Conditions: 150 mM KOAc, 10 mM MgCl2 and 150 mM bicine (pH 8.5), 24 C. This 177-nucleotide RNA was probed chemically with DMS. It was measured as part of the RMDB library TTRDEL. The DMS profile rests on 972 reads.
RNA sequence: GGGAACGACUCGAGUAGAGUCGAAAAGAUAUGGACCAUCCAUCGGAUGAUGACCUCGGAAACGAGCAAGUCCAGAUGGAGUGGUCCUAAGUCAAAACGAUGAUGGUACUUCGGUACCAUCAUCGAAUCAGUACCUGGGGUUCGCCCCAGGUACUGAAAAAGAAACAACAACAACAAC
Reactivity to DMS in 0.01 (KOAc 150mM, MgCl2 10mM, bicine 150mM(pH8.5), 24C), signal-to-noise 2, nucleotides 027 to 126: g010a040u000a300u010g010g020a000c010c000a090u000c000c010a020u000c000g010g000a010u010g000a090u020g000a150c300c000u000c000g000g000a150a090a110c000g000a000g020c010a020a170g010u010c000c010a090g000a000u000g000g010a080g010u000g010g000u000c000c000u000a000a050g000u000c030a080a060a120a260c040g000a000u010g000a000u000g040g000u000a000c000u000u020c210g030g000u010a000c000c000a020u000c000a020u000c000g000a030a000